Source information: The data come from the RNA Mapping Database (RMDB), library OK1LIB. The record gives the reactivity of an RNA of 177 nucleotides to DMS and 2A3. For 2A3, 2,060 sequencing reads were counted.
[RMDB]
RNA sequence: GGGAACGACUCGAGUAGAGUCGAAAAAUUGAGGUAAUAAUGAUUGUCAUAAGCGGUUUAAGUGCACGAUUUUUAAGAUCUUUAAAUGCAACAUUUAACCCUAAAGCAACCAUGGCCAUUAAUAAGCCGAUUCCACUAGGUUCGCCUAGUGGAAUCGAAAAGAAACAACAACAACAAC
Reactivity to DMS in 0.01 (KOAc 150mM, MgCl2 10mM, bicine 150mM(pH8.5), 24C), signal-to-noise 1, nucleotides 027 to 126: a090u000u010g000a010g000g050u030a100a090u020a020a040u000g000a070u000u000g000u000c060a120u010a080a130g000c250g040g000u020u010u010a020a030g050u000g010c000a090c090g040a000u000u000u000u000u050a080a080g020a040u010c070u000u030u000a040a040a090u040g010c120a020a120c050a050u000u000u000a040a000c000c000c000u000a030a070a230g000c030a000a050c060c000a010u000g000g000c000c010a060u040u010a040a000u020a070a150g020c110
Reactivity to 2A3 in 0.01 (KOAc 150mM, MgCl2 10mM, bicine 150mM(pH8.5), 24C), signal-to-noise 4, nucleotides 027 to 126: a000u230u280g040a100g030g050u100a070a080u110a150a040u160g000a030u040u080g040u040c030a050u020a170a040g050c100g120g000u020u040u040a010a010g000u010g000c000a000c160g060a050u000u060u000u000u220a050a040g020a080u020c020u020u230u090a050a060a020u070g010c010a060a060c000a110u010u000u030a020a000c000c000c020u080a120a130a000g030c020a010a030c030c040a000u020g040g000c010c020a020u110u110a060a080u140a160a000g050c060